[RMDB]
RNA sequence: GGGAACGACUCGAGUAGAGUCGAAAAGAUAUGGACCUGACCACGCCGUUUGACGAAUUUCGGAAACGAAAUUCCGAGGAACUACGUGAAGUCAGGUCCUAAGUCAAAAGUCCCCUUCGGGGGACAACGUCAAGGUAGGGUUCGCCCUACCUUGACGAAAAGAAACAACAACAACAAC
Reactivity to DMS in 0.01 (KOAc 150mM, MgCl2 10mM, bicine 150mM(pH8.5), 24C), signal-to-noise 1, nucleotides 027 to 126: g010a050u000a300u020g000g010a000c000c000u000g010a020c000c000a020c000g000c050c190g010u000u000u000g000a300c300g000a030a000u000u000u020c000g000g000a090a080a180c030g000a010a010a010u000u000c000c010g000a300g020g000a020a050c020u000a030c000g010u000g010a050a140g020u020c000a000g000g000u000c000c000u000a000a040g000u000c090a150a020a050a120g000u000c000c000c000c020u010u010c120g050g000g000g010g000a000c000a010a090

This 177-nucleotide RNA was probed chemically with DMS. The reactions ran in a buffer of 150 mM KOAc, 10 mM MgCl2 and 150 mM bicine (pH 8.5), at 24 C.